[RMDB]
This 177-nucleotide RNA was probed chemically with DMS and 2A3.
RNA sequence: GGGAACGACUCGAGUAGAGUCGAAAAGAUAUGGAGUGGAAGACUUUUGACGCGUCCCUCGGAAACGAGCGACGCGAUAAGUCUCCACUCCUAAGUCAAAACAUUAUGUAGUUCGCUACAUAAUGAACGGUAAUCUUCUGUUCGCAGAAGAUUACCGAAAAGAAACAACAACAACAAC
Reactivity to DMS in 0.01 (KOAc 150mM, MgCl2 10mM, bicine 150mM(pH8.5), 24C), signal-to-noise 2, nucleotides 027 to 126: g010a020u000a070u010g000g000a000g010u000g000g000a030a020g010a000c010u000u000u010u010g000a180c010g000c020g020u010c000c090c000u010c000g010g000a010a020a030c000g010a000g030c300g010a000c000g000c010g010a020u000a020a030g020u000c000u000c010c000a020c020u000c000c000u000a000a010g000u000c010a130a100a080a250c020a000u010u000a000u000g010u000a000g000u000u010c300g000c000u000a010c000a010u000a000a000u010g020a020a150
Reactivity to 2A3 in 0.01 (KOAc 150mM, MgCl2 10mM, bicine 150mM(pH8.5), 24C), signal-to-noise 2, nucleotides 027 to 126: g010a000u010a020u070g000g000a000g020u020g020g030a150a130g000a060c020u140u130u300u300g230a020c050g000c010g000u000c110c020c020u000c010g000g000a000a020a030c000g000a000g020c000g000a000c010g000c000g010a000u020a020a000g010u000c000u020c010c000a000c010u020c000c000u000a000a000g010u000c000a000a010a090a120c010a010u000u000a010u000g020u000a010g010u010u070c290g000c140u000a000c000a010u000a010a000u030g030a080a020

For 2A3 the reverse transcriptase was SuperScript II with manganese. DMS adducts were read by reverse transcription with MarathonRT. For 2A3, 2,917 sequencing reads were counted.